[RMDB]
RNA sequence: GGGAACGACUCGAGUAGAGUCGAAAACACACCUGGUUCGCCAGGUGUGAAAUAAAAGCUCACCAACCAAAAUAAACAAGAGCAUGGAUGGAAAAUAAAUAUAAACUGUAAUGUUCGCAUUACAGAAUCCAAUUACUAUGUUCGCAUAGUAAUUGGAAAAAGAAACAACAACAACAAC
Reactivity to 2A3 in 0.01 (KOAc 150mM, MgCl2 10mM, bicine 150mM(pH8.5), 24C), signal-to-noise 3, nucleotides 027 to 126: c000a000c000a010c000c000u000g010g020u040u050c160g010c100c020a000g000g000u000g000u010g000a020a000a000u030a000a040a010a020g010c030u010c050a050c020c000a030a040c020c010a080a090a080a110u180a100a180a070c070a120a090g030a020g080c040a030u040g070g030a060u040g010g030a050a100a100a050u200a040a180a000u210a090u090a080a090a060c000u030g000u010a000a020u020g030u020u040c200g000c110a000u000u000a000c000a000g070a010a030
Reactivity to DMS in 0.01 (KOAc 150mM, MgCl2 10mM, bicine 150mM(pH8.5), 24C), signal-to-noise 3, nucleotides 027 to 126: c010a010c000a030c000c000u000g000g000u000u010c200g050c030c010a000g000g000u010g000u000g000a010a090a050u010a080a070a100a140g010c030u010c010a150c050c030a050a070c050c050a030a080a100a100u000a040a080a120c180a110a080g000a050g030c070a040u000g000g000a080u010g000g000a100a090a070a060u010a050a090a060u010a130u000a120a060a100c000u000g010u000a000a020u000g010u010u020c190g040c000a000u000u000a000c000a000g000a080a090